This 177-nucleotide RNA was probed chemically with DMS and 2A3. The reactions ran in a buffer of 150 mM KOAc, 10 mM MgCl2 and 150 mM bicine (pH 8.5), at 24 C. Source: RMDB library OK2TST, as collected in RNAgym. Reactivities are rounded to 0.1 and cut off at 0 and 3.
RNA sequence: GGGAACGACUCGAGUAGAGUCGAAAAUCUGCUGUGCGAUGCUGUGUAUCACGGGUGCUGUACAGUUGUGAGUGCCUCCCAAACGUUGGGGGAAGAGUUCUGUGAUAUUCUGCCGGUGGUAUCGGGACGAGGUAGUACUAUUCGUAGUACUACCUCGAAAAGAAACAACAACAACAAC
Reactivity to DMS in 0.01 (KOAc 150mM, MgCl2 10mM, bicine 150mM(pH8.5), 24C), signal-to-noise 7, nucleotides 027 to 126: u010c020u000g010c020u000g010u010g020c050g010a090u010g000c060u000g010u000g010u010a060u010c040a050c040g000g000g010u010g010c030u010g010u000a050c040a100g010u000u010g020u010g000a090g010u000g010c060c020u000c000c000c020a050a120a140c240g000u010u010g020g010g010g000g010a070a100g000a100g010u000u000c020u000g010u010g010a050u010a050u000u000c050u000g020c020c040g010g010u000g010g000u000a050u000c040g000g010g010a300
Reactivity to 2A3 in 0.01 (KOAc 150mM, MgCl2 10mM, bicine 150mM(pH8.5), 24C), signal-to-noise 3, nucleotides 027 to 126: u030c010u060g010c020u030g050u080g070c040g060a130u060g030c030u040g020u030g020u090a030u060c040a000c050g030g000g020u080g010c020u030g030u090a040c030a150g080u110u100g070u220g050a080g020u010g000c000c000u020c000c000c000a070a170a050c170g120u140u080g010g000g000g000g010a020a040g080a010g080u100u050c020u050g020u030g040a020u010a050u120u040c060u070g040c020c030g040g000u020g000g060u060a120u110c000g000g000g050a020